[RMDB]
RNA sequence: GGGAACGACUCGAGUAGAGUCGAAAAGAUAUGGACCCAGGCGAGGAUCAUGUCGGUCGGAAACGACCGCAUGGGAGCCUGGUCCUAAGUCAAAAGAUUUGCAAAUACUUCGGUAUUUGCAAAUCAAGUGCUAUGUACUGUUCGCAGUACAUAGCACAAAAGAAACAACAACAACAAC
Reactivity to 2A3 in 0.01 (KOAc 150mM, MgCl2 10mM, bicine 150mM(pH8.5), 24C), signal-to-noise 2, nucleotides 027 to 126: g040a040u100a040u130g020g000a040c150c180c110a020g020g000c010g060a300g070g010a030u050c000a000u020g300u300c090g020g010u020c010g020g010a070a080a020c000g020a000c000c000g000c000a000u000g000g010g000a010g000c000c010u000g000g000u010c000c000u020a110a020g040u000c040a030a010a020a210g020a000u000u000u000g010c010a000a000a040u010a020c030u020u110c300g140g000u030a000u010u030u010g000c000a000a000a010u010c000a000a010
Reactivity to DMS in 0.01 (KOAc 150mM, MgCl2 10mM, bicine 150mM(pH8.5), 24C), signal-to-noise 2, nucleotides 027 to 126: g000a020u010a300u000g010g010a020c120c090c050a010g000g020c000g000a040g050g000a050u010c000a000u000g000u000c020g060g020u000c010g030g000a140a090a180c000g040a020c000c010g050c010a000u000g000g000g000a040g030c010c000u000g010g000u000c000c000u000a020a130g000u000c050a070a050a120a100g000a010u000u000u000g000c000a010a000a010u000a000c000u000u010c190g030g010u020a010u000u000u000g000c000a000a000a000u000c000a080a100